Structure probing data (2A3 and DMS) for a 207-nucleotide construct. It was measured as part of the RMDB library M2RFPK. The RNA was probed in 150 mM KOAc, 10 mM MgCl2 and 150 mM bicine (pH 8.5) at 24 C. 2A3 is a SHAPE reagent: it acylates the 2'-hydroxyl of flexible nucleotides of all four kinds. For 2A3 the reverse transcriptase was SuperScript II with manganese.
RNA sequence: GGGAACGACUCGAGUAGAGUCGAAAAGAAAGAAAGAAAGCGGUUGGGUGGGUCCAUUGACCGUCGUGGCGUAUUCGGACGCUUUACCACGACGCGAGGAAAUAGCGAGACCGACCACCCCCUUUAACAGAGGUAUAGUAGUUCGCUACUAUACCAAGAAAAGUAGGAAGUUCGCUUCCUACUUUUCAAAAGAAACAACAACAACAAC
Reactivity to 2A3 in 0.01 (KOAc 150mM, MgCl2 10mM, bicine 150mM(pH8.5), 24C), signal-to-noise 2, nucleotides 027 to 156: g030a010a020a000g070a060a040a010g050a040a040a020g110c140g100g060u220u130g160g050g070u040g010g020g070u000c010c000a030u140u000g000a000c010c000g000u000c000g010u000g000g040c090g030u080a140u070u090c020g050g030a020c000g000c040u070u100u070a030c000c000a020c000g000a000c000g020c000g000a010g020g020a020a140a020u080a060g030c020g000a020g040a060c020c020g030a010c000c000a010c000c000c000c020c010u030u200u040a050a030c050a030g100a050g150g000u000a000u000a010g000u000a000g000u020u060c170g020c110u000a000c000u000a000u010a000c000c010a000a000
Reactivity to DMS in 0.01 (KOAc 150mM, MgCl2 10mM, bicine 150mM(pH8.5), 24C), signal-to-noise 2, nucleotides 027 to 156: g000a190a060a100g000a160a130a220g000a120a070a090g040c140g020g020u000u000g000g010g040u000g030g020g000u020c000c020a160u000u010g020a030c150c000g020u000c010g050u010g000g000c030g030u010a160u010u010c040g030g000a100c050g010c060u000u000u000a030c030c000a020c000g020a020c000g000c020g010a010g010g010a030a050a060u000a040g030c010g010a100g010a080c020c030g010a050c010c000a030c000c000c010c020c010u000u010u000a090a200c150a230g010a110g000g080u000a010u010a000g040u000a040g020u000u020c300g030c000u000a010c010u000a000u000a000c000c000a010a060